Chemical mapping of a 177-nucleotide RNA with DMS and 2A3. It was measured as part of the RMDB library OK2TRN. DMS adducts were read by reverse transcription with MarathonRT. For 2A3, 1,947 sequencing reads were counted.
RNA sequence: GGGAACGACUCGAGUAGAGUCGAAAAAUAGCUGGACCGACAGAUCAGUGCGGUGGACGCUGGUCAGCUCCACCCAGCAGCGCUCGCAGGAUGGAAAGUACGAGUUGACACCCAAGGGCGACAACACAUGAAAAGUACACUUCGGUGUACUUUUCAUAAAAGAAACAACAACAACAAC
Reactivity to DMS in 0.01 (KOAc 150mM, MgCl2 10mM, bicine 150mM(pH8.5), 24C), signal-to-noise 3, nucleotides 027 to 126: a090u020a100g010c020u000g010g010a080c140c120g000a110c080a090g010a020u010c030a030g000u000g020c080g020g010u010g000g010a090c090g000c010u000g000g000u000c070a090g010c040u000c010c050a150c160c000c020a050g010c020a190g000c100g010c030u000c050g020c100a140g010g000a110u020g000g000a070a060a070g010u010a040c130g000a090g000u010u000g010a110c070a100c020c020c010a060a170g000g020g010c020g010a050c050a020a040c060a070c190
Reactivity to 2A3 in 0.01 (KOAc 150mM, MgCl2 10mM, bicine 150mM(pH8.5), 24C), signal-to-noise 2, nucleotides 027 to 126: a000u110a010g010c030u020g000g000a030c000c030g020a030c030a070g020a070u050c010a010g050u010g070c060g060g150u130g100g010a070c010g000c010u040g000g070u040c010a010g030c030u010c010c010a040c000c000c000a000g000c010a010g040c010g000c020u010c030g000c050a040g060g060a100u140g030g110a110a020a030g100u090a030c060g020a010g080u030u070g070a030c010a050c010c010c000a040a040g060g000g020c010g020a040c010a070a010c030a020c010